[RMDB]
RNA sequence: GGGAACGACUCGAGUAGAGUCGAAAAACGAGUCGUACGCGACUCGAAUGGUAUUGUCGGCGUAAAAGAACAAGACGACACCGGACGCGACCGGGCUAAAAAGCGAAACGUCAUCUACGGAUGACGAAAAACGGACCUGGGUUCGCCCAGGUCCGAACCUGCAGAAUUAGUUCGCUAAUUCUGCAGGAAAAGAAACAACAACAACAAC
Reactivity to 2A3 in 0.01 (KOAc 150mM, MgCl2 10mM, bicine 150mM(pH8.5), 24C), signal-to-noise 2, nucleotides 027 to 156: a020c000g000a000g010u000c010g000u040a030c220g020c020g130a000c000u000c000g010a030a080u070g000g070u170a110u100u120g020u050c020g030g020c030g050u070a070a050a160a140g100a050a090c090a130a000g040a020c000g000a010c000a000c000c000g010g020a010c020g000c000g000a000c010c020g010g000g000c020u010a040a020a000a000a000g000c030g040a110a040a000c010g020u010c000a000u010c000u000a010c210g110g000a000u000g000a010c010g000a050a040a000a010a000c010g000g000a000c000c010u000g010g000g010u030u070c070g080c010c000c000a000g000g000u000c000c000g000a010a000
Structure probing data (2A3) for a 207-nucleotide construct. Source: RMDB library M2RFPK, as collected in RNAgym. Values cover nucleotides 27 to 156. The 2A3 profile rests on 1,008 reads. 2A3 adducts were read by reverse transcription with SuperScript II with manganese.